[RMDB]
RNA sequence: GGGAACGACUCGAGUAGAGUCGAAAACGUCAAGGAUUCGUCCUUGACGAAAGUCGCGGCUUGAGGGCGUAUACCGCUGCGCACACACACGACCCUCAAGCCAAACAGGUGGAUUCGUCCACCUGAACCGAGAUAGUGGUUUCGACCACUAUCUCGGAAAAGAAACAACAACAACAAC
Reactivity to DMS in 0.01 (KOAc 150mM, MgCl2 10mM, bicine 150mM(pH8.5), 24C), signal-to-noise 1, nucleotides 027 to 126: c050g050u000c000a000a000g000g000a070u000u000c200g010u000c000c000u000u000g000a030c030g000a000a030a110g000u000c090g030c300g010g040c000u000u000g000a010g060g000g000c050g000u000a110u010a120c140c180g020c050u000g000c110g000c020a110c110a170c150a140c160a050c000g000a150c000c000c000u000c000a010a010g000c000c030a010a020a110c000a000g000g020u020g020g000a000u000u010c120g020u000c000c000a000c000c000u000g000a090a070
Reactivity to 2A3 in 0.01 (KOAc 150mM, MgCl2 10mM, bicine 150mM(pH8.5), 24C), signal-to-noise 2, nucleotides 027 to 126: c000g010u000c010a000a000g010g000a010u000u070c200g070u040c030c000u000u010g000a000c010g000a030a000a000g060u030c070g010c130g160g000c010u000u000g000a000g000g000g030c030g020u050a030u070a120c030c050g000c170u190g000c070g030c000a050c040a010c010a000c000a010c120g300a300c020c000c000u000c000a000a020g010c000c000a010a050a010c020a000g010g000u020g000g000a000u050u020c130g050u010c010c020a000c000c000u000g000a030a000
Record summary
The record gives the reactivity of an RNA of 177 nucleotides to DMS and 2A3. Conditions: 150 mM KOAc, 10 mM MgCl2 and 150 mM bicine (pH 8.5), 24 C. Source: RMDB library M2PK50, as collected in RNAgym.